The data come from the RNA Mapping Database (RMDB), library M2PK50. This 177-nucleotide RNA was probed chemically with 2A3 and DMS. Reactivities are rounded to 0.1 and cut off at 0 and 3. 2A3 adducts were read by reverse transcription with SuperScript II with manganese.
RNA sequence: GGGAACGACUCGAGUAGAGUCGAAAACUGUGAGGCUUCGGCCUCACAGAUAGGUUUCAUUUUAGUGAUUUUUCCAAACCCCUUUGUGCAAAAAUCAUUAAACUCGCGUACGUUUCGACGUACGCAAAUCUUAGUUAAGUUUCGACUUAACUAAGAUAAAAGAAACAACAACAACAAC
Reactivity to 2A3 in 0.01 (KOAc 150mM, MgCl2 10mM, bicine 150mM(pH8.5), 24C), signal-to-noise 7, nucleotides 027 to 126: c000u000g000u010g000a000g000g010c040u060u140c300g130g000c020c000u000c000a000c000a000g000a000u040a010g040g000u010u030u070c030a060u020u060u010u040a020g000u010g020a020u010u000u010u030u010c020c010a040a050a150c050c030c010c040u050u100u080g070u080g040c050a000a010a000a000a000u000c000a010u020u040a050a060a040c090u070c140g000c000g010u000a000c000g000u010u050u100c200g080a010c000g000u000a010c010g000c000a000a010
Reactivity to DMS in 0.01 (KOAc 150mM, MgCl2 10mM, bicine 150mM(pH8.5), 24C), signal-to-noise 5, nucleotides 027 to 126: c000u000g010u000g000a010g010g020c000u000u010c200g040g010c000c000u000c000a000c000a000g010a070u000a070g010g000u000u000u000c020a040u000u000u000u000a030g010u000g010a010u000u000u000u000u000c010c010a010a020a090c070c060c070c120u000u000u000g000u000g020c150a010a020a020a010a000u000c000a010u010u000a050a050a080c300u010c120g000c000g020u000a000c000g000u000u000u010c170g010a030c000g010u000a000c000g010c010a000a020
Conditions: 150 mM KOAc, 10 mM MgCl2 and 150 mM bicine (pH 8.5), 24 C.